[RMDB]
RNA sequence: GGGAACGACUCGAGUAGAGUCGAAAAGGGACGCCUUUAGAAGAAGAGGCUAGGUGGUAUUCCGGUGUGGGAUACUUGGUAAUAUGUAACGCUAAUUGCAUAAGAUUGUAGGACGGAAUUUACAGUGAAAACGGUCCUGCGUUCGCGCAGGACCGAAGAACAUCUAGCACUUCGGUGCUAGAUGUUCAAAAGAAACAACAACAACAAC
Reactivity to 2A3 in 0.01 (KOAc 150mM, MgCl2 10mM, bicine 150mM(pH8.5), 24C), signal-to-noise 1, nucleotides 027 to 156: g000g000g000a010c090g040c010c020u080u020u050a110g010a200a010g020a020a040g000a060g030g000c000u020a070g050g030u010g040g020u040a040u020u000c000c060g080g010u120g030u190g000g000g000a020u030a070c010u000u130g050g000u110a060a050u040a060u060g000u040a050a000c000g030c160u050a060a080u100u060g010c030a010u040a070a070g010a090u060u060g010u090a000g000g060a030c030g000g000a050a010u000u070u190a070c060a060g090u080g080a000a040a020a120c010g040g000u000c000c000u030g000c000g000u030u070c150g000c000g000c140a000g000g000a000c030c000g000a010a000